RNA sequence: GGGAACGACUCGAGUAGAGUCGAAAAUUCUUCUUGCAUCGAUCCACUUUCCGAGUUGCUCUUCUCUCCCCCUCCGGGGUCUCCUCGAAUCGGGCUGGCUCAUCCUCGAUUGCGAGCGGCGGUCCUGUCACCCUGCAGUUCGCUGCAGGGAAAAGAAACAACAACAACAAC
Reactivity to DMS in 0.01 (KOAc 150mM, MgCl2 10mM, bicine 150mM(pH8.5), 24C), signal-to-noise 7, nucleotides 027 to 129: u030u040c050u050u020c060u040u030g020c070a010u030c000g020a100u000c030c010a020c090u020u020u030c050c020g010a140g050u020u040g030c000u030c020u030u010c000u010c000u010c030c030c010c010c020u020c050c030g000g010g030g030u000c030u040c040c020u010c020g020a080a030u020c020g010g030g030c080u060g010g070c070u060c040a080u040c020c010u010c040g030a110u020u050g040c050g030a090g040c030g010g020c090g040g030u040c050c000u050g010u030c140a190
Reactivity to 2A3 in 0.01 (KOAc 150mM, MgCl2 10mM, bicine 150mM(pH8.5), 24C), signal-to-noise 6, nucleotides 027 to 129: u050u010c010u080u010c040u060u110g040c030a030u030c050g030a050u040c010c020a070c060u030u060u040c030c010g040a010g070u020u040g070c050u010c010u100u020c050u000c010u020c000c000c000c000c000u010c020c000g010g010g030g020u010c020u010c020c000u000c010g010a020a020u020c010g010g020g000c050u050g060g020c010u020c020a090u040c030c010u010c010g050a050u030u120g150c010g020a030g010c030g030g010c040g030g010u010c010c000u040g020u040c010a050
This 170-nucleotide RNA was probed chemically with DMS and 2A3. The reactions ran in a buffer of 150 mM KOAc, 10 mM MgCl2 and 150 mM bicine (pH 8.5), at 24 C. For DMS the reverse transcriptase was MarathonRT. The data come from the RNA Mapping Database (RMDB), library 15KLIB. Reactivities are given for positions 27 through 129.